[RMDB]
RNA sequence: GGGAACGACUCGAGUAGAGUCGAAAACAGAGCGAACCCGUAACAGCGAACAACAUCGUUCGUUUCUCCCGUCAAGCCGCCCCUGUGGCUGCCUGACACUCUUAACGGAGACGGGGUGAGGUCAGCCCAGUUACACCUUCUUCGGAAGGUGUAACUGAAAAGAAACAACAACAACAAC
Reactivity to 2A3 in 0.01 (KOAc 150mM, MgCl2 10mM, bicine 150mM(pH8.5), 24C), signal-to-noise 4, nucleotides 027 to 126: c040a020g040a020g080c020g020a050a030c000c000c020g030u050a070a030c020a060g010c010g020a010a010c030a050a060c020a260u200c130g000u000u000c000g010u000u020u010c010u010c000c000c000g010u020c010a010a020g020c000c000g010c000c020c000c070u170g130u260g080g000c000u000g000c000c010u010g010a010c010a040c030u160c030u140u210a080a050c100g000g010a020g010a010c010g040g000g000g000u040g050a020g020g140u050c020a040g000c000c000
Reactivity to DMS in 0.01 (KOAc 150mM, MgCl2 10mM, bicine 150mM(pH8.5), 24C), signal-to-noise 6, nucleotides 027 to 126: c170a140g000a030g000c020g020a140a100c000c000c000g030u020a140a110c280a070g010c010g030a010a000c000a120a160c300a150u020c140g010u000u000c010g000u000u010u020c000u000c010c020c120g020u010c020a050a040g000c010c050g000c010c010c040c200u030g040u050g030g020c000u010g000c010c030u000g020a000c020a110c170u050c170u030u010a210a110c200g000g020a020g000a060c060g010g000g000g000u000g010a300g000g000u000c020a110g000c020c030

Chemical mapping of a 177-nucleotide RNA with 2A3 and DMS.
The data come from the RNA Mapping Database (RMDB), libraries RFM100 and RFMREP.
Reactivities are given for positions 27 through 126.
DMS adducts were read by reverse transcription with MarathonRT.
2A3 adducts were read by reverse transcription with SuperScript II with manganese.
Conditions: 150 mM KOAc, 10 mM MgCl2 and 150 mM bicine (pH 8.5), 24 C.